[RMDB]
RNA sequence: GGGAACGACUCGAGUAGAGUCGAAAAGCGACUGCGGUAACAACGUCGUCUUGAGCGUCCGUGCGGAGGGUCAAGCAGGCUGUGCUAUUGAGCUCCGAAAUCACCACUCUCGCGUGCCGACCAUGUCCCGCUGUUCUAGUUUCGACUAGAACAGCGGAAAAGAAACAACAACAACAAC
Reactivity to 2A3 in 0.01 (KOAc 150mM, MgCl2 10mM, bicine 150mM(pH8.5), 24C), signal-to-noise 5, nucleotides 027 to 126: g040c010g030a020c030u030g010c020g060g050u140a150a050c050a030a030c040g010u010c000g010u020c030u040u070g030a020g010c020g030u000c010c000g020u060g040c060g010g050a030g020g000g060u020c040a010a040g020c030a040g210g000c100u160g040u050g080c000u070a110u160u190g070a030g020c020u020c010c000g040a050a070a000u130c040a010c040c000a030c020u010c000u020c010g040c010g020u010g010c010c020g030a030c010c010a060u100g060u020c000
Reactivity to DMS in 0.01 (KOAc 150mM, MgCl2 10mM, bicine 150mM(pH8.5), 24C), signal-to-noise 2, nucleotides 027 to 126: g010c080g030a080c000u000g020c300g020g000u040a040a040c070a070a300c130g040u000c000g000u000c070u000u000g000a050g000c160g000u000c030c100g000u010g010c000g000g000a080g000g000g000u000c110a140a070g000c040a070g000g040c180u010g000u020g010c010u000a120u000u000g000a120g000c060u000c010c020g000a050a100a160u020c090a130c030c050a100c000u000c070u000c060g000c030g000u000g000c080c030g010a040c010c040a040u000g010u040c080

Structure probing data (2A3 and DMS) for a 177-nucleotide construct. Values cover nucleotides 27 to 126. For 2A3 the reverse transcriptase was SuperScript II with manganese.